The data come from the RNA Mapping Database (RMDB), library VIROID. Chemical mapping of a 177-nucleotide RNA with DMS.
[RMDB]
RNA sequence: GGGAACGACUCGAGUAGAGUCGAAAAAAGGGGAAAGAAGGAAGGUGGAAAAGAAGGAGCUGGGCCUCCCGAUCCGAGGGGCCCAACUGCCAAGUUUGGAGAGCACUCCGGCCGAAAGGUCGAGGUACCAUCGAAUAUGGUUCGCCAUAUUCGAUGGAAAAGAAACAACAACAACAAC
Reactivity to DMS in 0.01 (KOAc 150mM, MgCl2 10mM, bicine 150mM(pH8.5), 24C), signal-to-noise 1, nucleotides 027 to 126: a080a060g000g000g000g000a030a060a030g030a110a040g010g000a050a090g020g010u010g010g000a050a050a020a080g000a130a110g000g030a020g050c030u000g030g000g000c000c000u000c010c050c030g000a110u010c210c040g000a030g000g000g000g000c010c000c000a000a020c000u000g000c050c000a040a100g030u000u010u010g010g000a080g010a060g000c160a050c050u000c020c010g000g020c080c000g000a110a050a100g050g000u000c010g000a010g010g000u000a200
Description:
Reactivities are given for positions 27 through 126.